An RNA of 207 nucleotides, treated with 2A3 and DMS and read out base by base. For 2A3 the reverse transcriptase was SuperScript II with manganese.
RNA sequence: GGGAACGACUCGAGUAGAGUCGAAAAUACCGCAGGCCUGCGGUCCGGCAGUGUGGAGACCUGCCGUAAGCCGUGUUGUUUUGACAACCGGGAGAAAGCGUAUGCGGAGGCAGCGCUUUCAGGGUCUAAAAGUAUGGGAUCUUCGGAUCCCAUACAACUUGUAUUACUACUUCGGUAGUAAUACAAGAAAAGAAACAACAACAACAAC
Reactivity to 2A3 in 0.01 (KOAc 150mM, MgCl2 10mM, bicine 150mM(pH8.5), 24C), signal-to-noise 5, nucleotides 027 to 156: u090a010c010c000g000c010a010g000g030c010c020u030g000c010g000g000u010c010c000g010g000c000a020g010u060g010u130g280g090a060g050a070c010c000u010g000c010c010g020u020a030a040g050c020c020g080u100g010u140u010g010u000u120u100u300g090a020c010a010a010c010c000g010g000g000a050g000a010a000a000g000c000g010u040a290u220g000c040g040g100a050g300g000c000a000g000c000g000c000u010u000u000c000a020g010g010g000u030c010u030a030a040a040a050g000u000a000u000g000g000g010a000u000c010u030u050c190g070g000a000u000c010c010c000a000u000a000c000a000a000
Reactivity to DMS in 0.01 (KOAc 150mM, MgCl2 10mM, bicine 150mM(pH8.5), 24C), signal-to-noise 1, nucleotides 027 to 156: u000a170c010c010g000c080a150g040g030c030c000u010g030c000g030g020u000c090c040g010g000c010a060g010u020g030u020g050g020a220g020a090c110c010u000g000c020c010g020u010a010a090g030c000c010g010u000g040u000u010g000u000u000u000u060g030a080c040a010a010c020c050g000g020g010a150g000a030a030a040g010c020g030u000a060u010g020c000g030g030a250g040g020c000a120g020c010g010c000u000u000u010c020a080g000g000g040u010c020u000a060a060a140a240g010u000a010u000g020g020g010a010u000c000u000u000c290g060g010a010u000c010c000c000a000u000a000c010a040a070

The RNA was probed in 150 mM KOAc, 10 mM MgCl2 and 150 mM bicine (pH 8.5) at 24 C.